[RMDB]
RNA sequence: GGGAACGACUCGAGUAGAGUCGAAAAGAUCGCAAUCGAUUAUAGCGAAUAUGAUACGCAUUUAACUCAUUAUAAUUUUCGAAAAGGCAUGUUAGAGGGAAUACGUGAGUCAAUGAAGCCAUAUAAACCAAACUCCUCUUUUCGAAGAGGAGUUUGGAAAAGAAACAACAACAACAAC
Reactivity to 2A3 in 0.01 (KOAc 150mM, MgCl2 10mM, bicine 150mM(pH8.5), 24C), signal-to-noise 3, nucleotides 027 to 126: g060a010u020c010g050c080a010a020u150c040g060a030u060u200a190u170a100g030c020g010a010a010u030a010u180g110a030u040a130c040g020c050a030u010u010u130a030a030c040u000c080a010u020u160a060u060a210a150u000u020u000u070c010g030a040a130a000a000g120g020c130a040u080g070u160u120a090g020a040g130g000g030a000a000u050a060c030g010u000g010a020g000u010c020a000a030u060g000a040a030g000c000c000a030u020a010u080a120a010a020
Reactivity to DMS in 0.01 (KOAc 150mM, MgCl2 10mM, bicine 150mM(pH8.5), 24C), signal-to-noise 2, nucleotides 027 to 126: g000a130u000c030g080c090a100a140u000c040g080a210u020u020a040u020a070g030c050g010a070a040u000a020u000g010a080u040a180c100g000c060a000u010u000u010a100a100c060u010c020a130u020u000a090u010a030a020u030u010u000u010c000g010a100a110a160a070g010g000c020a050u030g000u010u070a100g000a300g000g000g000a110a010u000a060c260g010u000g010a030g010u000c130a000a030u000g000a070a160g050c090c000a030u020a110u010a070a110a080